[RMDB]
RNA sequence: GGGAACGACUCGAGUAGAGUCGAAAAAGAGUUUAUACUCUGAUCACACAGUAACAUUGCAAUAAAAGCUUAGCUCGAGAUGCGUGUGCCGUUCUGCUUUUAAUGCGAUCUGGUUCCUUUUCUCCUCAAUAGAUAGCAACUUCGGUUGCUAUCUAUUAAAAGAAACAACAACAACAAC
Reactivity to DMS in 0.01 (KOAc 150mM, MgCl2 10mM, bicine 150mM(pH8.5), 24C), signal-to-noise 9, nucleotides 027 to 126: a010g010a020g000u000u020u040a110u030a080c000u000c000u000g000a190u010c100a130c130a160c100a060g000u030a090a100c170a060u010u010g010c030a050a070u010a040a040a060a060g000c010u010u010a110g010c040u000c030g000a080g010a080u030g010c020g000u010g010u000g010c040c020g010u000u000c040u000g000c020u000u000u000u010a030a080u010g010c020g010a030u010c040u000g000g010u000u000c010c000u000u010u010u010c040u000c020c080u020c200
Reactivity to 2A3 in 0.01 (KOAc 150mM, MgCl2 10mM, bicine 150mM(pH8.5), 24C), signal-to-noise 8, nucleotides 027 to 126: a000g060a010g010u120u210u110a210u080a040c000u000c010u010g020a070u100c000a010c010a000c000a110g060u120a180a040c030a170u060u160g010c020a020a070u040a130a080a020a000g010c020u080u130a040g010c010u040c050g090a120g040a150u170g090c040g040u150g070u120g080c010c010g010u030u020c020u050g020c000u030u070u030u100a080a070u090g010c010g030a030u020c010u040g040g000u020u040c000c000u030u030u040u010c030u010c010c010u080c020
This 177-nucleotide RNA was probed chemically with DMS and 2A3. In probing experiments dimethyl sulfate is read out at A N1 and C N3, which are open when not base-paired. The reactions ran in a buffer of 150 mM KOAc, 10 mM MgCl2 and 150 mM bicine (pH 8.5), at 24 C. Reactivities are rounded to 0.1 and cut off at 0 and 3. The data come from the RNA Mapping Database (RMDB), libraries RFM100 and RFMREP.